About this RNA
This 207-nucleotide RNA was probed chemically with DMS and 2A3. The reactions ran in a buffer of 150 mM KOAc, 10 mM MgCl2 and 150 mM bicine (pH 8.5), at 24 C. For 2A3, 1,227 sequencing reads were counted. The DMS profile rests on 2,434 reads.
[RMDB]
RNA sequence: GGGAACGACUCGAGUAGAGUCGAAAAAUGGUAGAUCUUAGUCAUGGACUGCAUCUGCGGCUCCAUUUGAAGAAUGAUUUAUAGUUCACAGCUUUGAUUCUGGAAGAGACAAACUUAGCAAGGAGGUUAAAGAUACAGGGAUUGAAAUGGCCUGCAGAUACGCAAGUAACUUCGGUUACUUGCGUAUAAAAGAAACAACAACAACAAC
Reactivity to DMS in 0.01 (KOAc 150mM, MgCl2 10mM, bicine 150mM(pH8.5), 24C), signal-to-noise 1, nucleotides 027 to 156: a110u000g000g020u000a010g000a060u020c020u000u010a140g010u000c040a050u000g040g000a080c010u010g010c030a300u000c110u010g040c080g000g000c060u000c030c030a100u000u000u000g010a060a100g000a050a100u000g010a080u010u000u020a070u000a150g030u000u000c040a060c040a130g010c010u000u000u020g010a100u010u010c000u000g070g010a080a110g000a120g000a080c070a060a000a070c050u000u000a030g020c020a040a120g020g000a060g010g000u000u000a050a000a050g010a120u000a010c050a030g060g000g020a120u010u010g020a040a050a140u000g020g010c060c020u010g010c060a060g020
Reactivity to 2A3 in 0.01 (KOAc 150mM, MgCl2 10mM, bicine 150mM(pH8.5), 24C), signal-to-noise 3, nucleotides 027 to 156: a000u120g030g000u040a040g010a090u010c000u090u090a060g070u130c010a040u030g010g010a030c000u010g000c000a110u070c120u240g010c010g060g040c130u010c030c000a040u090u080u130g010a060a030g040a060a030u100g020a050u080u120u080a100u140a100g080u070u080c060a030c030a070g020c010u120u090u100g040a050u140u050c010u110g040g010a040a000g020a030g010a050c020a000a110a020c060u030u100a010g030c030a020a010g040g000a000g010g000u030u060a110a050a000g020a000u070a060c050a010g030g000g010a020u050u110g060a090a090a040u030g000g010c000c020u020g000c040a010g000